[RMDB]
Structure probing data (2A3 and DMS) for a 177-nucleotide construct.

RNA sequence: GGGAACGACUCGAGUAGAGUCGAAAAGUGAAGGAGCGGUAGGCCAAUAGCUUAGCAUACCUGCUUCUCUCGCAGGAGGACGCGUGAGAGAGACACGACUAUUCCAAAAUAUAAUCAGCUAAGCUAGAAAUAUUUAUUAUUUCGAUAAUAAAUAUUUAAAAGAAACAACAACAACAAC
Reactivity to 2A3 in 0.01 (KOAc 150mM, MgCl2 10mM, bicine 150mM(pH8.5), 24C), signal-to-noise 3, nucleotides 027 to 126: g020u030g020a070a020g010g010a020g000c020g000g020u040a010g020g040c010c010a050a070u050a030g020c000u010u000a010g000c010a040u030a080c000c010u020g020c000u030u020c020u010c010u010c010g000c020a030g000g060a030g030g010a020c030g030c020g040u060g000a030g000a010g010a000g010a040c010a020c020g080a040c020u050a040u040u050c000c000a020a000a090a000u200a010u050a020a160u100c010a000g000c000u000a010a000g000c000u020a030g030
Reactivity to DMS in 0.01 (KOAc 150mM, MgCl2 10mM, bicine 150mM(pH8.5), 24C), signal-to-noise 4, nucleotides 027 to 126: g000u000g000a090a050g030g000a020g000c020g010g000u000a020g010g000c120c120a090a090u000a030g010c000u000u000a000g000c010a140u010a070c030c030u020g020c020u000u000c020u010c060u000c020g000c010a100g010g000a110g000g000a100c300g010c020g020u000g010a050g000a090g010a110g020a090c060a000c060g000a060c050u010a140u050u010c010c020a060a070a060a070u040a110u040a100a100u040c140a120g010c010u000a000a000g000c000u000a080g000
The DMS profile rests on 5,414 reads. Source: RMDB library OK1LIB, as collected in RNAgym.